[RMDB]
RNA sequence: GGGAACGACUCGAGUAGAGUCGAAAAGAUAUGGAGUGACUCCCAGUGGAGAACAGUUGUCGGAAACGACAAUGGGUUCGAUGAAACUGGGAGGUCACUCCUAAGUCAAAGUAGCGUUCGCGCUACAGAUUGUACCAAGGUUCGCCUUGGUACAAUCAAAAGAAACAACAACAACAAC
Reactivity to DMS in 0.01 (KOAc 150mM, MgCl2 10mM, bicine 150mM(pH8.5), 24C), signal-to-noise 5, nucleotides 027 to 126: g000a040u010a300u010g000g020a020g020u010g000a100c010u000c000c020c000a010g020u000g000g000a040g020a000a000c000a300g000u000u000g000u000c010g010g000a140a120a250c000g000a000c000a000a010u010g000g030g000u000u000c010g000a110u010g000a120a180a020c010u010g010g000g010a000g000g010u000c000a000c000u000c000c000u000a010a070g000u000c050a100a110a140g000u000a000g010c000g020u000u030c290g020c010g010c010u000a000c010a060
Reactivity to 2A3 in 0.01 (KOAc 150mM, MgCl2 10mM, bicine 150mM(pH8.5), 24C), signal-to-noise 3, nucleotides 027 to 126: g050a030u090a060u240g010g000a000g000u010g010a000c000u010c010c010c010a000g010u020g000g050a050g000a020a010c020a020g020u000u010g010u010c000g010g060a100a080a070c010g030a010c000a020a010u100g130g200g030u000u000c040g060a300u030g030a010a020a020c010u010g020g000g000a040g010g000u000c010a000c000u000c000c000u000a020a000g010u010c040a070a020a080g010u000a000g000c020g030u060u040c300g000c020g000c180u000a000c000a000

This 177-nucleotide RNA was probed chemically with DMS and 2A3. The reactions ran in a buffer of 150 mM KOAc, 10 mM MgCl2 and 150 mM bicine (pH 8.5), at 24 C. Source: RMDB library TTRDES, as collected in RNAgym. 2A3 adducts were read by reverse transcription with SuperScript II with manganese.